RNA sequence: GGGAACGACUCGAGUAGAGUCGAAAAGCGCUAUAAUAUUAGCUACGGCUAAUGCGCGCUAUAAUUACGUACGAUCGUACGAUUAAUAUUAUAAUGCCGCGCGAUAUGCCGGCGCAUUAGCAUCGGCCACUUCUGCAAUAUUCGUAUUGCAGAAGUGAAAAGAAACAACAACAACAAC
Reactivity to DMS in 0.01 (KOAc 150mM, MgCl2 10mM, bicine 150mM(pH8.5), 24C), signal-to-noise 7, nucleotides 027 to 126: g010c100g010c020u010a060u010a110a080u010a090u000u000a060g010c010u000a100c140g010g010c010u000a050a050u000g010c020g010c010g000c030u000a010u010a020a010u000u000a100c010g010u000a000c000g010a160u010c210g010u000a010c000g010a100u010u000a070a070u000a030u000u000a010u000a030a120u000g010c120c070g030c040g030c010g010a110u000a080u000g010c020c010g010g020c070g000c010a050u000u000a040g010c030a070u000c070g010g000c110
Reactivity to 2A3 in 0.01 (KOAc 150mM, MgCl2 10mM, bicine 150mM(pH8.5), 24C), signal-to-noise 7, nucleotides 027 to 126: g020c030g010c070u080a070u090a300a170u160a190u250u150a040g010c010u030a030c090g060g010c010u020a000a030u100g000c000g000c000g000c010u010a010u010a020a030u030u040a020c010g000u000a010c050g140a300u260c180g020u000a000c000g010a010u130u170a090a060u070a020u110u030a020u010a060a130u090g050c070c030g000c010g000c020g070a120u070a040u260g010c010c010g020g000c010g000c010a030u100u130a020g020c010a020u090c050g050g000c010